[RMDB]
RNA sequence: GGGAACGACUCGAGUAGAGUCGAAAAACUAAAAGGCAUCAAAUGACUAAAAGACAUUGAAAAACUAAACACCACUUCAUAUGUGUUCUUGGUGACAAGGCUUUUGUUCUGCAUAACCAACCAAGUAUGCUGUUUACAUCGUUUCCAACUGCCCAACCGGAAUAUAGUCAUUCGUGACUAUAUUCCGAAAAGAAACAACAACAACAAC
Reactivity to 2A3 in 0.01 (KOAc 150mM, MgCl2 10mM, bicine 150mM(pH8.5), 24C), signal-to-noise 6, nucleotides 027 to 156: a000c060u120a060a040a010a020g040g000c010a030u040c060a110a060a140u120g020a050c020u090a050a030a070a060g050a020c030a030u080u150g050a070a030a030a040a010c060u110a080a050a020c030a020c020c040a050c030u120u070c090a090u090a080u220g050u000g020u060u020c020u040u050g000g010u030g020a040c030a060a050g040g000c010u050u050u060u070g060u090u040c050u080g000c020a030u030a070a060c040c020a020a020c000c000a030a020g040u020a040u080g020c020u020g040u050u060u020a060c060a090u070c040g000u020u040u000c020c020a030a040c050u070g010c000c000c000a030a050c040
Reactivity to DMS in 0.01 (KOAc 150mM, MgCl2 10mM, bicine 150mM(pH8.5), 24C), signal-to-noise 3, nucleotides 027 to 156: a100c030u010a050a060a100a130g010g010c020a080u000c070a050a060a120u010g000a190c020u010a040a080a100a130g010a050c020a070u000u000g000a070a020a100a070a090c050u000a060a080a120c040a070c040c040a040c080u010u010c070a120u000a060u000g020u040g010u000u000c020u000u000g010g020u000g000a080c040a060a110g020g000c020u000u000u000u000g000u000u010c080u000g010c020a060u010a070a070c050c020a150a110c080c040a020a100g020u010a060u010g020c010u010g000u000u010u000a110c150a060u000c060g000u000u000u010c010c010a050a070c070u000g010c050c010c030a090a250c090
Description:
Chemical mapping of a 207-nucleotide RNA with 2A3 and DMS. The RNA was probed in 150 mM KOAc, 10 mM MgCl2 and 150 mM bicine (pH 8.5) at 24 C.